[RMDB]
RNA sequence: GGGAACGACUCGAGUAGAGUCGAAAAUAAACCUGUCCUGCUCAGAGCUAAAUAAAGAAAACAUUUGUGAAAGAUCAAUUGAGUUAGCUCGACUAUUGGCUACCCUGUUCACAAAAGUUAAAAUAUACCCUCAUCAUAUGUUCGCAUAUGAUGAGGGAAAAGAAACAACAACAACAAC
Reactivity to 2A3 in 0.01 (KOAc 150mM, MgCl2 10mM, bicine 150mM(pH8.5), 24C), signal-to-noise 4, nucleotides 027 to 126: u100a010a030a010c010c010u010g100u060c000c000u020g040c020u030c050a080g020a010g040c040u090a040a160a120u190a040a200a060g170a060a220a040a010c020a040u010u020u030g030u000g020a040a060a040g090a070u200c030a020a040u080u080g020a040g090u020u090a010g000c000u020c040g020a040c020u060a070u100u100g020g000c000u060a070c030c000c000u080g020u060u010c040a010c010a060a050a040a040g080u110u070a110a060a160a040u150a010u080a100
Reactivity to DMS in 0.01 (KOAc 150mM, MgCl2 10mM, bicine 150mM(pH8.5), 24C), signal-to-noise 1, nucleotides 027 to 126: u000a080a030a020c040c010u000g000u020c000c000u000g000c130u000c180a030g000a080g010c060u020a040a070a020u030a030a120a040g020a060a100a050a050c010a060u000u000u000g000u000g030a050a090a080g030a100u010c070a010a040u030u000g000a220g080u000u010a000g010c000u000c080g000a040c080u030a120u000u000g000g000c000u020a050c030c030c050u000g030u000u000c060a010c110a000a010a010a070g000u020u000a010a000a030a060u040a070u020a090

Record summary
Conditions: 150 mM KOAc, 10 mM MgCl2 and 150 mM bicine (pH 8.5), 24 C. An RNA of 177 nucleotides, treated with 2A3 and DMS and read out base by base. For DMS, 1,615 sequencing reads were counted. 2A3 adducts were read by reverse transcription with SuperScript II with manganese.